[RMDB]
The record gives the reactivity of an RNA of 207 nucleotides to 2A3 and DMS. Conditions: 150 mM KOAc, 10 mM MgCl2 and 150 mM bicine (pH 8.5), 24 C. For 2A3, 3,279 sequencing reads were counted.
RNA sequence: GGGAACGACUCGAGUAGAGUCGAAAAGGAUGAUCUGGCCCCGGCCAGUAAUCCGAAUUAGUACCGGGAUUGCAUCGUCGAGCCGUCAGGGGCGAAGACGAGAACCUGAAAGCACGAAGCACUGGGCGGUGCGGGUGCGAGAUAUAACGCCCAACAAGCUGAUUAAUAUAUUCGUAUAUUAAUCAGCAAAAGAAACAACAACAACAAC
Reactivity to 2A3 in 0.01 (KOAc 150mM, MgCl2 10mM, bicine 150mM(pH8.5), 24C), signal-to-noise 3, nucleotides 027 to 156: g010g000a010u030g010a040u100c000u000g010g010c000c010c050c100g120g010c010c010a000g000u010a010a020u000c010c000g000a020a030u110u080a040g060u020a050c000c020g010g000g020a120u060u130g080c060a090u040c010g000u010c020g010a010g010c020c000g130u230c160a130g220g020g000g020c010g040a080a000g000a010c010g000a000g000a010a020c010c010u040g040a130a020a020g000c010a010c030g040a060a000g000c010a000c070u090g000g000g020c020g020g000u000g000c000g030g010g000u000g020c050g010a010g030a010u150a000u010a120a060c020g000c000c000c000a000a030c030a010a000
Reactivity to DMS in 0.01 (KOAc 150mM, MgCl2 10mM, bicine 150mM(pH8.5), 24C), signal-to-noise 3, nucleotides 027 to 156: g040g010a040u000g010a250u010c000u000g030g000c000c020c200c240g090g060c000c000a040g020u000a070a050u000c010c020g000a080a050u000u000a110g010u010a130c010c040g000g000g020a170u000u020g040c080a250u010c030g010u000c000g020a300g000c020c000g030u000c140a210g020g000g000g030c020g010a140a160g010a060c020g010a090g010a040a090c010c010u000g000a100a120a130g010c010a060c000g010a150a240g000c010a090c080u020g010g010g040c060g020g030u000g000c050g000g000g010u010g000c010g000a060g000a140u000a090u010a140a070c000g010c000c010c020a070a100c090a180a300
DMS adducts were read by reverse transcription with MarathonRT. Values cover nucleotides 27 to 156.